This 207-nucleotide RNA was probed chemically with DMS and 2A3.
For DMS, 1,743 sequencing reads were counted.
The RNA was probed in 150 mM KOAc, 10 mM MgCl2 and 150 mM bicine (pH 8.5) at 24 C.
[RMDB]
RNA sequence: GGGAACGACUCGAGUAGAGUCGAAAAGAUCGUUCAUCUCUCCAAUUAAUCCGACUUUGACAACCGGGAUGGACCUCUUACAGGCGGGAGAGACGGAAGUAAGGAUAAUCCUGAAGGAACGCGCCAAUGAAGUCCGCCGGGUUCGCCCGGCGGACAACAUAAAGCAAUCGUUCGCGAUUGCUUUAUGAAAAGAAACAACAACAACAAC
Reactivity to DMS in 0.01 (KOAc 150mM, MgCl2 10mM, bicine 150mM(pH8.5), 24C), signal-to-noise 1, nucleotides 027 to 156: g040a050u000c020g000u000u000c010a150u000c010u000c020u000c000c010a100a160u020u000a300a180u000c000c070g020a050c050u000u010u030g030a160c130a030a090c040c030g020g030g010a090u010g010g000a120c010c030u010c040u010u020a100c080a090g000g010c090g040g020g000a090g000a060g010a050c050g020g010a100a070g020u000a120a040g010g000a290u000a080a140u000c030c000u020g000a220a170g040g000a040a020c040g030c030g030c030c030a080a140u010g000a110a240g000u000c000c000g070c000c050g070g100g060u000u000c210g060c030c010c000g020g020c000g000g020a000c000a010a040
Reactivity to 2A3 in 0.01 (KOAc 150mM, MgCl2 10mM, bicine 150mM(pH8.5), 24C), signal-to-noise 2, nucleotides 027 to 156: g000a120u050c000g000u010u000c000a030u000c000u010c000u000c010c040a090a170u120u140a190a050u150c020c000g110a110c090u110u090u240g080a140c150a070a040c110c050g040g000g000a040u090g020g090a170c000c020u050c050u020u130a090c060a070g000g020c020g040g000g010a010g000a000g000a010c010g040g050a010a010g010u020a000a010g000g000a050u090a150a010u240c000c000u010g000a020a000g000g020a010a010c000g000c000g050c020c030a000a110u120g040a230a030g000u000c010c000g010c000c000g010g000g020u030u000c100g050c050c000c000g010g010c020g010g000a000c000a000a000